The record gives the reactivity of an RNA of 207 nucleotides to 2A3.
Values cover nucleotides 27 to 156.
The data come from the RNA Mapping Database (RMDB), library RNAMAK.
Conditions: 150 mM KOAc, 10 mM MgCl2 and 150 mM bicine (pH 8.5), 24 C.
For 2A3, 1,634 sequencing reads were counted.
RNA sequence: GGGAACGACUCGAGUAGAGUCGAAAAGGGGUCUCGCUUGUCAGCGAGGAGCUUGGAUUUACCAGCUGAAGCCUCCACGGCUGGUUGUCAGCUCCGAGCUUGGAUUUAGCGAGACGGAGGCACCCAAAAGUCCUCGAUGCUUCGGCAUCGAGGACAAGUUGACUUUACUCUUCGGAGUAAAGUCAACAAAAGAAACAACAACAACAAC
Reactivity to 2A3 in 0.01 (KOAc 150mM, MgCl2 10mM, bicine 150mM(pH8.5), 24C), signal-to-noise 2, nucleotides 027 to 156: g080g000g040g000u010c010u000c000g000c000u020u030g010u070c070a040g010c030g020a030g020g000a000g000c020u200u240g140g010a040u100u240u300a020c010c000a000g000c000u020g020a170a000g010c000c010u000c000c010a030c000g030g000c000u000g020g000u000u020g000u000c070a010g010c010u010c020c000g010a020g010c020u060u170g090g000a030u110u170u300a010g000c000g010a000g000a000c000g010g010a000g010g000c010a020c000c000c000a050a170a010a000g000u010c010c000u000c000g000a010u000g010c010u030u140c300g110g000c000a000u000c000g000a000g000g000a000c000a000a000